This 177-nucleotide RNA was probed chemically with 2A3 and DMS. DMS adducts were read by reverse transcription with MarathonRT.
[RMDB]
RNA sequence: GGGAACGACUCGAGUAGAGUCGAAAAGCAAAGCACAUGAAGCACAUGAAGCACAUGAAGCACAUGAACCACAUGAAGCACAUGAAGCACAUGAAGCACAUGAAGCACAUGAAGCACAUGAAAAAAACAUUAACACAUGGUUCGCCAUGUGUUAAUGAAAAGAAACAACAACAACAAC
Reactivity to 2A3 in 0.01 (KOAc 150mM, MgCl2 10mM, bicine 150mM(pH8.5), 24C), signal-to-noise 5, nucleotides 027 to 126: g040c050a040a020a050g000c010a020c000a050u050g050a100a010g000c010a020c000a050u050g060a120a010g000c020a010c000a030u030g060a090a020g000c020a000c000a030u040g030a070a040c040c020a040c030a080u060g060a120a010g030c010a020c000a060u030g050a100a020g000c030a020c010a050u050g070a090a010g010c010a020c000a050u030g070a110a020g020c020a010c010a070u060g040a060a030g010c000a030c010a090u150g120a080a040a010a010a010a010a010
Reactivity to DMS in 0.01 (KOAc 150mM, MgCl2 10mM, bicine 150mM(pH8.5), 24C), signal-to-noise 4, nucleotides 027 to 126: g030c080a060a070a110g000c040a080c030a050u000g020a050a110g020c020a130c070a060u020g010a090a070g020c030a110c090a040u000g000a060a080g020c050a160c060a060u000g010a100a090c050c130a080c020a070u000g010a040a060g000c020a110c040a040u000g000a050a100g000c040a140c090a020u010g000a050a130g030c060a120c020a030u000g010a060a110g020c020a090c030a010u000g010a080a080g010c070a080c090a020u010g010a000a010a050a060a040a030a150
The DMS profile rests on 3,419 reads. For 2A3, 9,384 sequencing reads were counted.